[RMDB]
The record gives the reactivity of an RNA of 207 nucleotides to 2A3. The reactions ran in a buffer of 150 mM KOAc, 10 mM MgCl2 and 150 mM bicine (pH 8.5), at 24 C. 2A3 adducts were read by reverse transcription with SuperScript II with manganese. The 2A3 profile rests on 1,440 reads.
RNA sequence: GGGAACGACUCGAGUAGAGUCGAAAAGAAAGAAAGAAAGAAGCCGGUUCUGCUAGUUUCACGGCAACCACGUUGAAAUUACAACGAAAGAAGCUCGCACUCAACUUCAACGGCUUAACGAGUGCAAAAAAGAAGUAUCACUUCGGUGAUACUUCAAGGAGUUUAUGUAGUUCGCUACAUAAACUCCAAAAGAAACAACAACAACAAC
Reactivity to 2A3 in 0.01 (KOAc 150mM, MgCl2 10mM, bicine 150mM(pH8.5), 24C), signal-to-noise 2, nucleotides 027 to 156: g040a040a120a010g060a030a150a000g060a040a160a020g050a030a000g040c050c050g050g000u040u070c090u130g050c010u010a030g070u000u020u110c100a100c060g010g000c070a010a040c020c010a060c000g000u020u050g040a100a120a060u150u050a060c010a080a000c020g050a030a030a120g020a030a000g030c130u220c230g000c030a000c000u000c010a030a090c010u060u010c040a120a030c020g000g020c010u010u000a020a010c020g000a000g000u000g000c000a000a000a000a170a000a000g000a000a000g000u010a000u000c000a000c000u010u060c110g000g000u000g000a000u000a000c000u000u000c000a010a010